Structure probing data (DMS and 2A3) for a 170-nucleotide construct. For DMS the reverse transcriptase was MarathonRT. For 2A3 the reverse transcriptase was SuperScript II with manganese.
RNA sequence: GGGAACGACUCGAGUAGAGUCGAAAAAAGAACCAGGAACACCUCAAGAAGAGGAGACUUCCCCAAGGGUAGGUGGAACGCCAGGGAACAAGGAAAUAGGAGAAGGAACGGUAGAAAAGAGCGAGCCAGAGCUCAGGGUUCGCCCUGAGCAAAAGAAACAACAACAACAAC
Reactivity to DMS in 0.01 (KOAc 150mM, MgCl2 10mM, bicine 150mM(pH8.5), 24C), signal-to-noise 8, nucleotides 027 to 129: a060a040g050a140a070c040c020a140g000g050a080a060c160a070c080c010u030c080a130a080g030a130a070g000a030g040g000a060g000a120c100u050u030c030c030c000c120a150a150g030g030g060u030a040g030g020u020g090g040a030a060c110g040c050c050a110g020g020g030a090a070c000a100a060g000g000a030a050a070u040a090g000g030a040g020a070a000g040g020a030a060c100g000g000u050a060g020a070a090a060a050g010a060g000c070g020a060g000c070c060a030g020a170
Reactivity to 2A3 in 0.01 (KOAc 150mM, MgCl2 10mM, bicine 150mM(pH8.5), 24C), signal-to-noise 5, nucleotides 027 to 129: a000a040g080a020a030c020c020a020g010g020a030a030c020a030c030c000u050c040a030a070g040a070a000g020a060g030g000a010g020a010c020u040u030c050c000c000c010a070a080g030g000g050u060a030g010g070u100g040g050a060a030c040g060c020c010a010g000g000g000a030a040c030a040a030g060g010a030a050a050u140a040g040g010a050g000a020a020g030g010a050a000c030g000g040u100a040g070a040a070a020a010g060a000g030c030g010a000g040c000c010a020g000a010

Reactivities are given for positions 27 through 129. For DMS, 17,993 sequencing reads were counted. For 2A3, 11,739 sequencing reads were counted. The reactions ran in a buffer of 150 mM KOAc, 10 mM MgCl2 and 150 mM bicine (pH 8.5), at 24 C.